[RMDB]
Notes:
Structure probing data (2A3) for a 207-nucleotide construct. For 2A3 the reverse transcriptase was SuperScript II with manganese. The RNA was probed in 150 mM KOAc, 10 mM MgCl2 and 150 mM bicine (pH 8.5) at 24 C. The data come from the RNA Mapping Database (RMDB), library M2RFPK. For 2A3, 971 sequencing reads were counted.

RNA sequence: GGGAACGACUCGAGUAGAGUCGAAAAACACCAAAACUGCAAACGGAAGGCAAUCCUUCCACGACGAUACUUACUUUCCUUUGAUCGUCGUUACUACUGGCAUAGCCACAAAGGAGAACAAACAUGAGCGCGGACACUGACUUCGGUCAGUGUCCAACCUUUUCUAGCCGUUCGCGGCUAGAAAAGGAAAAGAAACAACAACAACAAC
Reactivity to 2A3 in 0.01 (KOAc 150mM, MgCl2 10mM, bicine 150mM(pH8.5), 24C), signal-to-noise 2, nucleotides 027 to 156: a000c080a060c020c000a070a040a060a070c140u180g070c050a080a040a080c080g030g020a010a010g050g010c190a090a180u300c020c000u000u040c010c010a000c010g000a010c000g010a010u130a190c020u050u020a010c020u070u150u040c010c000u080u030u030g020a000u000c000g040u000c020g000u010u040a030c070u010a000c000u020g050g000c110a230u110a140g010c020c010a020c040a030a030a010g040g020a020g030a060a000c070a120a070a000c060a200u180g040a010g100c160g000c090g000g000a000c000a000c000u000g000a000c010u040u060c180g040g000u000c010a000g000u010g000u000c000c000a000a000